[RMDB]
Overview:
The data come from the RNA Mapping Database (RMDB), library OK1LIB. Chemical mapping of a 177-nucleotide RNA with 2A3 and DMS.

RNA sequence: GGGAACGACUCGAGUAGAGUCGAAAAGGGACUGGGGGCCUCAUGCUUGGUGUGAGAAUGGCAAGGGUCCUGGGUGGGCUUUAAUGGCCAAGUGCAGCUCAGUGACUCCAUUGGAGCCUCAGGCAGGGCCACUCGUUAUGUUCGCAUAACGAGUGGCAAAAGAAACAACAACAACAAC
Reactivity to 2A3 in 0.01 (KOAc 150mM, MgCl2 10mM, bicine 150mM(pH8.5), 24C), signal-to-noise 3, nucleotides 027 to 126: g020g010g020a030c050u010g040g000g000g010g000c000c000u100c070a160u070g020c000u030u070g110g000u010g020u020g080a130g060a060a020u050g000g070c120a060a060g100g000g030u000c000c000u020g000g010g010u140g040g030g030c050u070u130u030a190a090u200g000g020c000c020a030a000g050u080g060c060a070g000c010u000c060a040g010u050g230a060c020u040c020c000a040u000u110g070g050a010g030c000c000u010c000a010g000g080c000a000g000g010
Reactivity to DMS in 0.01 (KOAc 150mM, MgCl2 10mM, bicine 150mM(pH8.5), 24C), signal-to-noise 2, nucleotides 027 to 126: g000g000g020a210c070u000g000g000g000g030g000c050c010u030c050a110u040g050c050u050u000g030g050u000g000u030g000a300g000a060a070u000g020g030c300a180a090g030g010g030u000c010c000u000g000g000g030u050g030g010g000c030u000u010u060a050a050u020g000g020c160c020a040a040g000u020g040c230a230g010c020u000c040a010g000u050g000a030c000u000c000c000a060u000u040g020g010a300g000c040c020u010c000a010g000g000c060a030g030g010
Conditions: 150 mM KOAc, 10 mM MgCl2 and 150 mM bicine (pH 8.5), 24 C. For DMS the reverse transcriptase was MarathonRT.